RNA sequence: GGGAACGACUCGAGUAGAGUCGAAAACAAACUAAUUCUUGCGGCCGCGAUACGCUCGAUUGUAGUGGGAGUACGCGUACACCUUAAAGGUUAGGCUAUGUUCGGCUCCUAUCGAGAGGAGAGAGCCUGCGUGCGAUUAUUUCGAUAAUCGCACGCAAAAAGAAACAACAACAACAAC
Reactivity to DMS in 0.01 (KOAc 150mM, MgCl2 10mM, bicine 150mM(pH8.5), 24C), signal-to-noise 1, nucleotides 027 to 126: c000a110a100a050c050u010a010a010u000u040c000u020u000g010c300g020g000c150c010g020c000g000a080u000a010c000g000c020u000c000g000a270u000u040g040u020a140g000u000g000g000g020a030g030u000a000c020g010c000g020u000a090c300a080c020c040u000u030a290a060a040g000g050u000u000a030g000g010c130u000a040u000g010u000u000c030g010g000c000u000c060c000u000a100u000c020g010a090g030a170g000g000a080g000a090g010a150g010c000c020
Reactivity to 2A3 in 0.01 (KOAc 150mM, MgCl2 10mM, bicine 150mM(pH8.5), 24C), signal-to-noise 2, nucleotides 027 to 126: c060a050a160a010c000u040a030a070u210u210c020u000u040g000c010g000g020c060c030g030c010g110a130u030a050c020g010c020u000c020g160a210u110u200g220u180a100g060u190g040g040g010a040g010u030a010c040g030c000g060u050a030c010a060c100c000u110u280a060a040a000g020g010u030u010a030g000g000c040u050a030u120g080u020u000c010g020g000c030u000c000c010u030a060u080c030g000a010g010a040g120g050a080g000a020g000a030g080c030c010
The data come from the RNA Mapping Database (RMDB), library OK2TST. This 177-nucleotide RNA was probed chemically with DMS and 2A3. 2A3 is a SHAPE reagent: it acylates the 2'-hydroxyl of flexible nucleotides of all four kinds. The RNA was probed in 150 mM KOAc, 10 mM MgCl2 and 150 mM bicine (pH 8.5) at 24 C. For DMS the reverse transcriptase was MarathonRT. Values cover nucleotides 27 to 126. For 2A3, 1,029 sequencing reads were counted.